RNA sequence: GGGAACGACUCGAGUAGAGUCGAAAAACAGUCAGUACGCUGACUGAGGGAAACGGGAGCCGGGCUUGGGACAAGUGCCAUCCCAAGUCCAAGGCCAAGUAGGCUCUAGUGAUGGUACGCCAUCACAAAAACUGGUCUACCUUCGGGUAGACCAGAAGUACGUACCGUUGUUCGCAACGGUACGUACAAAAGAAACAACAACAACAAC
Reactivity to 2A3 in 0.01 (KOAc 150mM, MgCl2 10mM, bicine 150mM(pH8.5), 24C), signal-to-noise 3, nucleotides 027 to 156: a000c000a000g010u000c000a000g000u040a040c260g050c090u010g000a010c000u010g020a090g040g060g010a060a150a150c120g040g040g030a040g000c050c010g020g000g000c000u000u010g000g000g020a020c060a160a100g080u020g080c020c010a010u000c010c000c000a000a000g000u000c000c000a010a020g010g010c010c020a040a020g060u090a080g060g030c010u010c040u080a030g010u010g000a000u000g010g020u020a040c260g030c040c010a000u010c000a000c000a000a050a000a000a000c000u000g000g000u000c000u010a000c000c010u040u080c230g070g000g010u000a000g000a000c000c000a000g000a000a000